[RMDB]
An RNA of 177 nucleotides, treated with 2A3 and DMS and read out base by base. DMS adducts were read by reverse transcription with MarathonRT. The 2A3 profile rests on 1,575 reads.

RNA sequence: GGGAACGACUCGAGUAGAGUCGAAAAGCCAGCCGCCCACAGCCGAAGGCGGAACAGGGGGCCCGGCGCCCAGCGCCGACAGGACCAAGCGGGCCAGGAACGCGCCCCCACCCAAAAGGCGACGGGCCUUAUUAGGAGCGUUCGCGCUCCUAAUAAGAAAAGAAACAACAACAACAAC
Reactivity to 2A3 in 0.01 (KOAc 150mM, MgCl2 10mM, bicine 150mM(pH8.5), 24C), signal-to-noise 2, nucleotides 027 to 126: g040c010c010a010g110c070c060g020c010c010c000a040c050a020g070c000c020g190a140a070g170g060c300g030g050a050a040c110a240g000g000g000g000g010c070c100c040g020g000c090g000c010c100c100a060g040c030g020c000c010g010a040c040a100g030g010a050c030c010a010a070g090c070g020g010g000c000c010a040g000g080a240a070c060g060c030g000c070c040c010c000c000a040c010c000c000a000a160a030a000g000g000c000g010a010c040g020g040g010c010
Reactivity to DMS in 0.01 (KOAc 150mM, MgCl2 10mM, bicine 150mM(pH8.5), 24C), signal-to-noise 3, nucleotides 027 to 126: g000c030c010a120g000c080c100g040c030c000c020a140c240a280g000c070c060g060a130a130g030g010c100g000g000a090a060c160a100g000g000g000g020g010c000c060c050g000g030c090g050c020c090c130a110g040c030g010c000c020g020a130c180a100g000g000a060c070c100a110a180g010c100g010g010g000c010c020a120g010g000a130a130c120g020c230g010c000c010c000c000c010a080c020c040c020a070a060a120a150g010g010c010g020a050c300g000g010g020c050